[RMDB]
RNA sequence: GGGAACGACUCGAGUAGAGUCGAAAAGGAUCCUACCAUCACAGGACGGUAACUGCGUCCCGUACAGUUACCCCUGUGAUGGAUGGUUGUCAUUGUACGGGACGACGGCUAGAUGAAUUUAGGAUCGCUAGAUGUGAGUAUUCGUACUUACAUCUAGAAAAGAAACAACAACAACAAC
Reactivity to 2A3 in 0.01 (KOAc 150mM, MgCl2 10mM, bicine 150mM(pH8.5), 24C), signal-to-noise 9, nucleotides 027 to 126: g030g000a000u000c000c000u010a050c000c000a000u000c000a000c000a010g020g070a070c130g030g000u010a010a010c010u020g020c010g090u060c000c020c010g020u120a030c000a000g000u000u010a000c000c000c000c000u000g000u010g010a000u010g010g000a000u010g010g000u020u020g010u010c030a080u050u200g080u120a070c070g050g050g050a010c050g010a010c000g010g000c020u030a040g010a210u130g070a150a200u070u080u060a010g000g000a000u010c010g000
Reactivity to DMS in 0.01 (KOAc 150mM, MgCl2 10mM, bicine 150mM(pH8.5), 24C), signal-to-noise 9, nucleotides 027 to 126: g000g000a010u000c000c000u000a110c020c000a010u000c000a010c010a010g000g010a150c190g020g000u000a010a010c010u000g010c080g010u000c040c030c050g010u010a180c000a010g000u000u000a010c010c010c000c000u000g010u000g000a010u000g000g010a020u000g010g010u000u000g010u000c020a160u000u000g010u010a080c140g010g000g010a070c100g010a030c020g010g000c030u000a060g010a130u000g010a080a140u000u000u000a010g010g000a010u000c010g010
This 177-nucleotide RNA was probed chemically with 2A3 and DMS. The data come from the RNA Mapping Database (RMDB), library OK2TRN. The RNA was probed in 150 mM KOAc, 10 mM MgCl2 and 150 mM bicine (pH 8.5) at 24 C. For DMS, 201,839 sequencing reads were counted. High DMS reactivity at an A or C suggests that its Watson-Crick edge is free.